[RMDB]
An RNA of 207 nucleotides, treated with 2A3 and read out base by base.
For 2A3, 751 sequencing reads were counted.
The RNA was probed in 150 mM KOAc, 10 mM MgCl2 and 150 mM bicine (pH 8.5) at 24 C.
RNA sequence: GGGAACGACUCGAGUAGAGUCGAAAAUGUGAUCUUGGAAUCUUUUUCAACGUGAAACAACAUGAUAGGAACUACUAGCUGUCAUUCUAGGUCAGUUUCACAUUUAUGUAAGGGAUUCAUUGUAAAAAUAGUAGAGGAAAGAUGUCCAUCAGUCAUCGUUUCCAGAUUACUUCGGUAAUCUGGAAACAAAAGAAACAACAACAACAAC
Reactivity to 2A3 in 0.01 (KOAc 150mM, MgCl2 10mM, bicine 150mM(pH8.5), 24C), signal-to-noise 2, nucleotides 027 to 156: u150g010u010g030a070u000c030u030u050g020g000a020a010u000c000u030u010u000u030u110c040a070a060c040g030u010g030a050a000a000c010a000a020c050a080u060g000a010u030a010g030g000a070a030c040u070a010c040u030a050g120c060u060g150u200c030a070u120u050c040u070a030g020g110u050c090a060g000u030u010u010c020a020c010a040u030u090u030a060u040g080u070a020a080g110g000g040a060u020u020c020a010u070u070g070u180a000a080a100a000a000u140a060g060u100a050g020a020g020g080a030a110a000g010a010u040g180u090c000c000a020u050c040a020g070u050c010a020u080c040
2A3 adducts were read by reverse transcription with SuperScript II with manganese.